[RMDB]
RNA sequence: GGGAACGACUCGAGUAGAGUCGAAAACGUCUAGCGUUCGCGCUAGACGAAAGUAGCAACAUGUCAAAUCUCGCACACAUGAAAGCUACAAAUGCGAGAAAAAAACUAGGAGCUUCGGCUCCUAGAACCCAGUAUUCUUGUUCGCAAGAAUACUGGGAAAAGAAACAACAACAACAAC
Reactivity to 2A3 in 0.01 (KOAc 150mM, MgCl2 10mM, bicine 150mM(pH8.5), 24C), signal-to-noise 2, nucleotides 027 to 126: c010g000u000c010u020a010g000c000g000u000u020c300g020c000g020c100u010a000g000a000c000g000a010a000a000g040u010a000g050c020a000a090c010a050u040g030u140c060a060a130a260u040c030u000c020g030c020a030c010a000c000a050u050g070a180a120a070g020c030u010a020c030a020a060a010u100g010c030g020a030g000a090a150a050a010a010a000a030c000u010a000g000g000a000g000c030u030u070c240g070g000c000u000c010c000u000a010g000a010a000
Reactivity to DMS in 0.01 (KOAc 150mM, MgCl2 10mM, bicine 150mM(pH8.5), 24C), signal-to-noise 1, nucleotides 027 to 126: c000g000u010c000u000a010g070c000g020u000u000c160g030c010g020c010u000a010g010a000c000g030a020a010a130g020u000a010g010c000a010a300c040a010u000g010u000c280a100a050a060u000c060u000c000g020c020a070c290a060c090a040u000g000a070a160a200g000c000u040a060c010a090a080a040u000g000c040g020a040g000a020a000a080a050a130a110a300c000u000a000g010g000a000g050c030u000u000c270g000g000c000u030c000c000u000a000g000a020a090
The record gives the reactivity of an RNA of 177 nucleotides to 2A3 and DMS. Reactivities are given for positions 27 through 126. For DMS the reverse transcriptase was MarathonRT. Values are in units of 0.01, from 0 to 300, in steps of 10. Conditions: 150 mM KOAc, 10 mM MgCl2 and 150 mM bicine (pH 8.5), 24 C.